[RMDB]
The record gives the reactivity of an RNA of 177 nucleotides to DMS. Conditions: 150 mM KOAc, 10 mM MgCl2 and 150 mM bicine (pH 8.5), 24 C. Source: RMDB library M2PK90, as collected in RNAgym. Reactivities are given for positions 27 through 126.
RNA sequence: GGGAACGACUCGAGUAGAGUCGAAAAUUAAAGGAGGAGGAGGAGUGUGUGUCUUCCCAGCUGCUGAGUUGAACCUCCGCACACACGCGAAAGCUACGAGCAGCAGCAGUGCGGAAACGGUGAAAAACACACAGUCUACCUUCGGGUAGACUGUGUGAAAAGAAACAACAACAACAAC
Reactivity to DMS in 0.01 (KOAc 150mM, MgCl2 10mM, bicine 150mM(pH8.5), 24C), signal-to-noise 2, nucleotides 027 to 126: u000u050a030a080a100g010g000a050g000g000a060g000g000a140g000g000a050g010u000g030u000g000u000g000u000c080u000u010c070c010c000a110g000c030u000g000c010u010g000a120g000u000u010g000a110a130c040c010u000c020c010g010c010a010c030a120c180a150c200g030c010g050a090a120a130g000c050u030a110c180g010a140g010c030a070g010c150a110g000c090a090g030u000g000c050g000g000a030a030a050c200g010g010u020g010a000a100a080a070a140